[RMDB]
Structure probing data (DMS and 2A3) for a 177-nucleotide construct.
RNA sequence: GGGAACGACUCGAGUAGAGUCGAAAACACAGGCGACUUAAUCGGAGAGCGGUUACACGCGAGGAAGAUGAAAUUAUUUCAUCAGUAGACUCGAGAUUACUACAACUUGCGUUGCUAUCUCAAAUAACUCGUACUCAAACUUCGGUUUGAGUACGAGAAAAGAAACAACAACAACAAC
Reactivity to DMS in 0.01 (KOAc 150mM, MgCl2 10mM, bicine 150mM(pH8.5), 24C), signal-to-noise 1, nucleotides 027 to 126: c070a110c150a160g010g000c020g020a080c160u000u020a050a010u000c070g030g000a070g000a090g010c050g000g020u020u000a070c200a060c000g010c000g030a030g020g010a110a140g000a020u000g020a010a000a240u010u010a100u020u000u000c010a000u020c000a060g000u000a070g000a220c020u010c030g010a130g020a090u010u000a050c020u000a010c170a100a030c020u000u000g000c050g000u000u010g020c060u000a130u000c010u020c020a030a110a130u000a110a110
Reactivity to 2A3 in 0.01 (KOAc 150mM, MgCl2 10mM, bicine 150mM(pH8.5), 24C), signal-to-noise 2, nucleotides 027 to 126: c100a000c060a020g140g050c010g020a030c030u100u150a120a000u120c020g010g000a070g050a010g050c100g050g000u020u100a050c100a000c030g020c010g040a020g040g030a040a100g000a020u010g000a010a030a080u300u270a160u070u080u000c000a010u010c000a000g030u020a000g010a030c000u000c090g010a050g000a110u110u130a040c040u010a020c050a040a010c000u010u020g000c000g010u030u040g020c020u050a080u090c020u030c050a100a120a080u140a070a070